[RMDB]
RNA sequence: GGGAACGACUCGAGUAGAGUCGAAAAUCGUGUUCUCGUGAGAGUACACACACUCGUGAUCACGUGAGUACGUGAGAACGAGUUCUCGUGAACACUCUCGAACGAUCUCGUGAGAACGAUCGAGAGAACGAGAUCGAUCUCUCACGAGUUCGAUCUCCUUGCGGCGCAAUUUCGAUUGCGCCGCAAGAAAAGAAACAACAACAACAAC
Reactivity to 2A3 in 0.01 (KOAc 150mM, MgCl2 10mM, bicine 150mM(pH8.5), 24C), signal-to-noise 2, nucleotides 027 to 156: u090c020g020u020g000u160u020c010u000c010g010u110g010a000g000a000g030u110a020c050a000c020a000c000a030c100u020c000g000u000g000a040u000c000a000c000g000u060g100a130g190u300a060c010g000u000g020a010g050a000a000c000g000a010g000u000u000c040u030c010g000u000g120a110a040c050a020c040u000c000u000c020g010a070a040c000g010a060u020c000u030c000g090u140g060a060g070a030a060c050g020a030u030c010g010a000g000a040g030a110a090c070g040a050g000a020u050c050g040a040u010c000u000c000u000c010a010c010g000a000g030u010u000c010g010a020u000c000u000c000